[RMDB]
RNA sequence: GGGAACGACUCGAGUAGAGUCGAAAAUGGCAUGACACCACGCUCGGUGCGAUUGUUGAGGCGAUAGCCUCCCGUAACAGGCUGGAAGCCAGUGUCGCUCCGUCACUGGCCGGAAUUAAAAUCCCGCACAUCGACCAGUCGCAGGAGUCUGAUGCGACUCAAAUUCCUUAUUCGUAAGGAAUUUGAGAAAAGAAACAACAACAACAAC
Reactivity to 2A3 in 0.01 (KOAc 150mM, MgCl2 10mM, bicine 150mM(pH8.5), 24C), signal-to-noise 3, nucleotides 027 to 156: u050g070g000c040a040u050g040a050c010a010c050c000a040c040g000c010u080c070g120g030u080g060c010g030a040u040u150g070u060u130g050a030g000g020c030g060a070u090a060g000c010c000u030c020c000c030g040u050a090a050c020a040g010g030c000u040g050g020a070a000g010c000c010a010g010u000g010u010c060g020c220u110c070c110g010u010c010a000c000u000g000g000c010c000g020g030a030a000u160u100a130a070a040a070u020c030c010c010g010c000a090c000a110u050c030g040a070c010c020a020g040u090c000g010c020a050g000g040a040g010u000c060u090g040a030u050g020c020g020a010
Reactivity to DMS in 0.01 (KOAc 150mM, MgCl2 10mM, bicine 150mM(pH8.5), 24C), signal-to-noise 2, nucleotides 027 to 156: u010g030g010c010a110u000g030a170c060a080c020c010a090c120g000c070u000c040g000g000u000g020c000g030a090u000u010g000u000u010g010a090g020g020c000g000a210u000a060g020c000c000u000c010c010c090g010u000a090a100c030a070g010g020c000u010g050g010a150a120g000c000c020a050g010u000g020u000c030g000c090u000c080c020g010u010c010a020c020u020g020g010c000c010g020g030a060a090u000u000a050a060a090a160u000c030c010c010g030c040a070c050a110u000c010g000a040c060c020a060g010u010c040g000c020a120g010g000a070g010u000c040u000g010a070u000g010c020g010a170